[RMDB]
RNA sequence: GGGAACGACUCGAGUAGAGUCGAAAAAAUUGGGUUAAAACGGUGGGGGACGAUCCCGUAACAUCCGUCCUAACGGCGACAGACUGCACGGCCCUGCCUCUAAGGUGUGUUCAAUGAACAGUCGUUCUGGCCCCUAAGGCGUUCGCGCCUUAGGGAAUACAUGAUUGCGAUUCGUCGCAAUCAUGUAAAAAGAAACAACAACAACAAC
Reactivity to DMS in 0.01 (KOAc 150mM, MgCl2 10mM, bicine 150mM(pH8.5), 24C), signal-to-noise 1, nucleotides 027 to 156: a080a060u000u010g000g020g010u030u010a010a040a100a040c040g000g050u000g010g040g030g020g050a090c080g030a050u010c030c020c020g040u000a070a090c040a060u000c020c000g040u030c030c010u010a080a110c100g000g000c020g010a080c070a070g010a130c030u000g000c100a150c090g030g030c020c060c000u010g010c050c030u000c050u000a040a030g000g030u000g000u000g010u000u000c040a020a090u000g020a100a010c070a100g050u010c010g000u010u000c020u000g030g000c030c000c000c010u010a000a030g010g000c000g040u000u020c300g010c020g070c000c000u000u000a010g010g020g000a000a030
Reactivity to 2A3 in 0.01 (KOAc 150mM, MgCl2 10mM, bicine 150mM(pH8.5), 24C), signal-to-noise 2, nucleotides 027 to 156: a010a030u060u090g020g010g000u090u080a120a020a000a020c010g000g000u070g050g030g010g030g020a040c070g000a060u120c040c020c000g000u020a100a030c020a170u030c020c000g030u000c000c010u040a060a010c050g020g010c010g050a030c020a050g040a010c020u080g000c030a000c060g070g000c020c000c010u060g040c010c000u140c040u070a060a050g020g000u040g000u000g000u020u090c160a200a140u160g010a050a010c020a070g020u020c000g000u020u010c040u030g110g000c000c000c000c000u000a000a000g000g010c000g010u070u100c220g000c000g000c050c000u000u000a000g010g000g000a000a000
Structure probing data (DMS and 2A3) for a 207-nucleotide construct. Reactivities are given for positions 27 through 156.